Structure probing data (2A3) for a 207-nucleotide construct. For 2A3, 477 sequencing reads were counted. 2A3 is a SHAPE reagent: it acylates the 2'-hydroxyl of flexible nucleotides of all four kinds. Conditions: 150 mM KOAc, 10 mM MgCl2 and 150 mM bicine (pH 8.5), 24 C.

RNA sequence: GGGAACGACUCGAGUAGAGUCGAAAAACUAUCUUCUCGCGUUGCACAUCGGCCUCGAUCACCCGACCGGCGAGGUCGUCGCGGGCAUCGAAAAGCCGCUGGCGAUGGCCCACCUGACUGCGACGUUCGAGGGGGCAAGCGCCCAUGCGGGGAAAGCUGAAAAACUGGUUUUCGAACCAGUUUUUCAAAAAGAAACAACAACAACAAC
Reactivity to 2A3 in 0.01 (KOAc 150mM, MgCl2 10mM, bicine 150mM(pH8.5), 24C), signal-to-noise 1, nucleotides 027 to 156: a000c110u170a110u120c050u120u020c010u010c000g010c010g020u010u130g070c050a070c000a190u070c000g010g010c010c010u050c030g060a090u080c070a070c090c030c050g190a230c080c030g040g000c010g050a060g130g070u100c000g010u010c030g010c050g000g000g020c000a030u060c040g040a000a000a050a050g040c000c000g020c050u080g020g010c010g000a010u040g160g020c020c010c000a190c010c030u020g020a030c010u090g020c090g040a070c090g180u110u070c060g070a020g000g000g000g000g000c040a110a060g000c020g070c060c040c000a000u130g010c000g000g000g000g040a000a120a120g070c060